[RMDB]
RNA sequence: GGGAACGACUCGAGUAGAGUCGAAAAUAAUAUUUGAUAUGAUAUUUUCAAUUUCUAUGCUAUGCCAAAGUGUCUGACAUAAUCAAACAUUUGCGCAUUCUUUGACCAAGAAUAGUCAGCAAAUUGUUUAUCGCCUUAAAUUCGUUUAAGGCGAUAAAAAAGAAACAACAACAACAAC
Reactivity to DMS in 0.01 (KOAc 150mM, MgCl2 10mM, bicine 150mM(pH8.5), 24C), signal-to-noise 2, nucleotides 027 to 126: u040a050a030u010a050u010u000u010g000a090u010a040u010g010a100u010a010u000u000u010u020c050a060a110u010u000u000c020u010a050u010g000c100u000a030u010g010c010c030a100a030a120g010u010g000u020c060u000g000a080c100a050u020a080a120u000c100a030a020a020c030a020u000u000u000g000c050g010c040a030u000u000c010u000u000u040g010a090c300c140a020a070g000a020a050u010a050g010u020c050a080g020c010a000a020a050u010u000g000u000
Reactivity to 2A3 in 0.01 (KOAc 150mM, MgCl2 10mM, bicine 150mM(pH8.5), 24C), signal-to-noise 3, nucleotides 027 to 126: u090a010a020u030a080u000u090u070g030a010u010a030u190g010a000u020a070u100u050u040u160c060a080a080u050u070u060c050u040a090u080g030c000u020a020u100g020c000c010a070a140a070g040u040g020u090c050u020g030a040c020a100u210a050a060u210c070a060a030a040c030a010u010u000u000g020c010g000c020a010u010u000c000u020u060u120g080a050c030c010a020a000g000a020a010u070a090g140u150c020a000g000c010a030a020a010u040u030g010u010

This 177-nucleotide RNA was probed chemically with DMS and 2A3. The RNA was probed in 150 mM KOAc, 10 mM MgCl2 and 150 mM bicine (pH 8.5) at 24 C. The 2A3 profile rests on 2,192 reads.